[RMDB]
RNA sequence: GGGAACGACUCGAGUAGAGUCGAAAAACACACACACAUGCACAAAGGCCCAUGUGUGCGGGCCAUGCGCUUCACACGCUUAUUCGCUAUUUUUGAGAGGCGUUCAAGUGAAAGAGAGCCCUCUCCAUCCAUCGUCAUAUUUCGAUAUGACGAUGGAAAAAGAAACAACAACAACAAC
Reactivity to 2A3 in 0.01 (KOAc 150mM, MgCl2 10mM, bicine 150mM(pH8.5), 24C), signal-to-noise 9, nucleotides 027 to 126: a000c060a000c000a010c000a000c010a000c010a020u090g010c040a030c060a110a130a050g090g010c020c030c010a060u120g070u020g030u040g060c070g000g010g000c000c010a040u110g010c040g000c020u030u040c020a030c010a010c040g040c010u060u090a110u170u060c040g020c100u090a190u170u190u020u110u130g040a030g000a010g010g030c120g020u000u020c060a120a050g040u080g220a080a070a020g180a010g000a000g000c000c000c000u010c000u000c010c000a030
Reactivity to DMS in 0.01 (KOAc 150mM, MgCl2 10mM, bicine 150mM(pH8.5), 24C), signal-to-noise 2, nucleotides 027 to 126: a040c030a130c050a080c020a070c010a010c000a010u010g000c070a020c090a060a160a150g000g000c000c090c030a080u010g010u010g000u000g010c120g000g000g000c020c000a080u020g000c010g030c040u010u000c020a070c070a080c050g010c020u000u010a080u000u000c030g000c050u000a040u010u000u020u020u030g010a050g000a020g000g000c080g000u000u000c060a080a060g010u000g000a090a060a130g020a180g000a040g020c010c010c000u000c000u000c050c160a150

An RNA of 177 nucleotides, treated with 2A3 and DMS and read out base by base. For 2A3, 11,083 sequencing reads were counted. In probing experiments dimethyl sulfate is read out at A N1 and C N3, which are open when not base-paired. The data come from the RNA Mapping Database (RMDB), library OK1LIB. Conditions: 150 mM KOAc, 10 mM MgCl2 and 150 mM bicine (pH 8.5), 24 C. Reactivities are rounded to 0.1 and cut off at 0 and 3.